[RMDB]
RNA sequence: GGGAACGACUCGAGUAGAGUCGAAAAUCACGGCACAAUAGCGCUCGUCUGCGUUCUGUCAGGGCCUGUUUUGGUAAUGCCUUUCUUUCUGUUAUGCGCUACGCUGAUCGUCUGAGUAUAUGGCCUGAACCAUCGUUAAAUUCGUUUAACGAUGGUUAAAAGAAACAACAACAACAAC
Reactivity to DMS in 0.01 (KOAc 150mM, MgCl2 10mM, bicine 150mM(pH8.5), 24C), signal-to-noise 9, nucleotides 027 to 126: u010c070a090c110g010g000c030a060c100a080a090u020a080g020c060g010c020u000c120g000u010c060u010g010c040g010u010u010c040u000g010u010c050a100g010g000g010c020c020u000g010u000u000u010u010g010g010u010a070a080u010g010c050c020u000u000u000c030u000u010u000c050u010g010u010u010a060u010g010c050g010c050u010a060c080g010c040u000g000a110u010c060g010u000c030u000g000a080g010u000a060u010a060u010g000g010c010c030u000g010
Reactivity to 2A3 in 0.01 (KOAc 150mM, MgCl2 10mM, bicine 150mM(pH8.5), 24C), signal-to-noise 9, nucleotides 027 to 126: u090c020a010c050g030g010c020a030c020a080a210u080a140g050c040g010c030u030c030g090u030c060u080g030c010g040u060u040c030u050g100u080c050a080g000g030g030c010c010u050g070u030u100u050u080g050g010u090a100a060u140g030c010c000u030u080u040c020u020u080u010c030u050g090u080u070a080u160g040c040g000c020u040a040c040g010c030u030g020a080u030c020g040u010c040u030g020a010g080u050a060u020a060u200g050g010c000c010u000g010

Source: RMDB libraries RFM100 and RFMREP, as collected in RNAgym. The record gives the reactivity of an RNA of 177 nucleotides to DMS and 2A3. 2A3 adducts were read by reverse transcription with SuperScript II with manganese. The RNA was probed in 150 mM KOAc, 10 mM MgCl2 and 150 mM bicine (pH 8.5) at 24 C.